[RMDB]
RNA sequence: GGGAACGACUCGAGUAGAGUCGAAAACCGCUACCGCGACGACAAGUCCUACCCUGUGCUGGCGGUCACCCUGGGCGAGGAAUUUCCCCGGUUGAUGGUCUAUCGCGGUCCGCGGCGCAAGGGUGUGCGAUCGCAGCAUAUUCGUAUGCUGCGAUCGAAAAGAAACAACAACAACAAC
Reactivity to 2A3 in 0.01 (KOAc 150mM, MgCl2 10mM, bicine 150mM(pH8.5), 24C), signal-to-noise 1, nucleotides 027 to 126: c000c000g000c050u070a050c000c020g020c000g000a000c000g040a020c140a180a050g070u090c040c010u030a010c000c010c010u030g020u030g050c000u080g270g080c010g000g090u010c020a040c010c000c010u030g050g000g000c070g060a040g030g260a100a060u070u010u010c000c030c010c010g050g010u070u050g050a070u100g060g020u070c020u100a100u080c020g020c000g070g000u000c020c010g000c000g070g000c000g000c010a110a150g000g000g000u040g030u050g000
Reactivity to DMS in 0.01 (KOAc 150mM, MgCl2 10mM, bicine 150mM(pH8.5), 24C), signal-to-noise 1, nucleotides 027 to 126: c040c010g010c120u000a040c030c040g010c010g010a050c170g000a080c060a070a160g010u010c070c010u000a070c010c020c010u000g000u000g010c050u000g040g030c000g000g000u000c030a060c060c030c030u000g010g010g000c080g000a060g000g040a110a170u010u000u000c010c010c000c090g010g010u060u010g000a080u000g000g000u000c070u010a130u010c020g000c060g020g000u000c040c030g020c040g010g030c010g000c000a060a030g000g000g000u000g000u000g080
The record gives the reactivity of an RNA of 177 nucleotides to 2A3 and DMS. It was measured as part of the RMDB library OK2TST. For DMS the reverse transcriptase was MarathonRT. 2A3 is a SHAPE reagent: it acylates the 2'-hydroxyl of flexible nucleotides of all four kinds.